[RMDB]
RNA sequence: GGGAACGACUCGAGUAGAGUCGAAAAGAAAGUAGCGACUUACUAACCGGUAAGGACGGAGCGUAAACAUACCGCGAAAGUAUGAGGCUAAGAUAGGCCGAACUAUCAAAAGAAAAGCUACGAAAAAGGGUAAACUUGAGUUCGCUCAAGUUUACCCAAAAGAAACAACAACAACAAC
Reactivity to DMS in 0.01 (KOAc 150mM, MgCl2 10mM, bicine 150mM(pH8.5), 24C), signal-to-noise 3, nucleotides 027 to 126: g000a060a040a070g060u000a060g020c010g020a300c000u040u030a000c020u060a110a260c300c020g030g030u000a050a040g000g010a040c090g020g000a200g040c050g010u050a130a090a230c050a060u000a020c030c000g020c160g000a140a170a080g000u000a000u000g010a090g010g010c040u000a080a090g000a030u010a040g000g000c030c090g000a070a090c010u000a050u040c010a020a030a060a120g000a210a060a090a080g000c010u010a000c010g000a000a000a060a040a060
Reactivity to 2A3 in 0.01 (KOAc 150mM, MgCl2 10mM, bicine 150mM(pH8.5), 24C), signal-to-noise 2, nucleotides 027 to 126: g190a000a040a000g000u010a000g000c040g220a050c020u000u030a000c000u040a010a100c090c000g010g000u080a070a000g060g060a000c020g060g120a040g020c070g000u080a000a010a000c010a000u040a020c010c010g080c040g080a120a040a050g010u060a000u040g080a120g000g130c050u060a060a030g090a170u100a040g040g000c060c100g010a010a000c020u090a060u040c040a030a000a000a000g010a000a120a000a000g000c000u000a000c000g110a070a060a000a000a000